[RMDB]
RNA sequence: GGGAACGACUCGAGUAGAGUCGAAAAAUGGUAGUUAGUCUACUCGCUAUCCUAGUUACUUUGGAGUAAUCUAAAGUGUGUGUAAACGGGCGAAAGUCUGUAAAACACUGGGGACAUAGGGUCAACAAGAACUAGUAGACCUUCGGGUCUACUAGAACCUAUUUCCUUGGUUCGCCAAGGAAAUAGGAAAAGAAACAACAACAACAAC
Reactivity to DMS in 0.01 (KOAc 150mM, MgCl2 10mM, bicine 150mM(pH8.5), 24C), signal-to-noise 2, nucleotides 027 to 156: a160u010g000g020u010a050g010u000u000a100g010u020c010u000a020c010u000c000g010c070u010a070u000c000c030u030a160g020u000u000a020c040u000u020u000g040g000a040g010u000a180a130u000c020u000a000a000a010g010u000g020u000g000u010g000u000a060a290a060c020g010g000g050c010g010a170a170a100g020u000c010u030g010u010a080a150a180a070c020a030c000u010g000g030g000g020a060c060a130u000a050g020g000g030u000c070a050a120c050a050a090g030a120a190c000u000a000g030u000a000g000a030c000c000u000u000c250g060g030g010u010c000u000a020c000u010a000g000a020a070
Reactivity to 2A3 in 0.01 (KOAc 150mM, MgCl2 10mM, bicine 150mM(pH8.5), 24C), signal-to-noise 3, nucleotides 027 to 156: a000u110g020g000u020a030g020u060u110a060g040u060c020u020a030c020u020c050g040c050u050a050u080c000c000u030a060g070u100u080a030c000u030u010u010g020g040a030g020u110a080a120u010c010u020a010a000a030g010u020g000u000g000u000g020u070a090a130a010c020g010g010g000c020g040a040a010a030g010u000c000u000g030u050a020a030a070a020c020a010c020u030g040g000g000g000a010c030a070u060a070g050g010g030u080c030a040a050c040a130a040g070a080a030c000u000a000g000u000a000g000a000c000c000u020u030c180g090g000g000u000c000u010a000c000u000a000g000a000a000
The record gives the reactivity of an RNA of 207 nucleotides to DMS and 2A3.
The RNA was probed in 150 mM KOAc, 10 mM MgCl2 and 150 mM bicine (pH 8.5) at 24 C.